[RMDB]
RNA sequence: GGGAACGACUCGAGUAGAGUCGAAAAGUAAUAGAUAACUGGAUGCAGCGUAGGCGUCAACGCAUAUCCAGUACGAAUGGUUCCUGUAAAUAAAAUAUGGCGCCUAGUACAAGAACCAACAGAAGGAUAAGCGAUGGUGAUGUCAAUCACAUUUGCAUAAUUACUGAUAGUUCGCUAUCAGUAAUUAAAAAGAAACAACAACAACAAC
Reactivity to 2A3 in 0.01 (KOAc 150mM, MgCl2 10mM, bicine 150mM(pH8.5), 24C), signal-to-noise 7, nucleotides 027 to 156: g040u060a030a140u070a140g110a100u100a130a050c000u000g010g010a020u060g080c220a110g000c210g010u010a020g000g000c000g000u000c000a000a000c000g000c000a010u010a010u110c000c000a000g010u010a000c020g060a090a120u060g030g000u000u000c000c000u000g020u020a050a140a110u160a040a110a040a040u170a040u010g000g000c000g000c000c000u010a010g010u010a000c010a040a010g010a040a010c020c000a020a050c030a070g110a120a030g080g010a070u060a130a040g000c010g030a020u070g060g100u020g010a030u040g110u170c090a070a070u030c010a020c010a050u060u060u180g000c000a020
Reactivity to DMS in 0.01 (KOAc 150mM, MgCl2 10mM, bicine 150mM(pH8.5), 24C), signal-to-noise 5, nucleotides 027 to 156: g010u010a080a120u000a130g010a140u000a090a060c010u000g010g010a030u000g010c110a100g010c020g050u000a070g010g020c020g020u000c000a060a040c010g010c010a150u000a090u000c010c010a020g020u010a060c080g020a090a130u010g020g020u000u000c010c010u000g010u010a070a110a130u000a070a090a110a160u010a130u000g020g010c010g020c010c010u000a070g000u000a070c020a020a030g000a050a060c010c010a040a170c100a100g000a120a100g010g010a110u000a040a150g030c010g010a050u010g030g030u000g020a060u010g010u010c200a060a070u000c040a040c040a100u000u000u000g050c050a230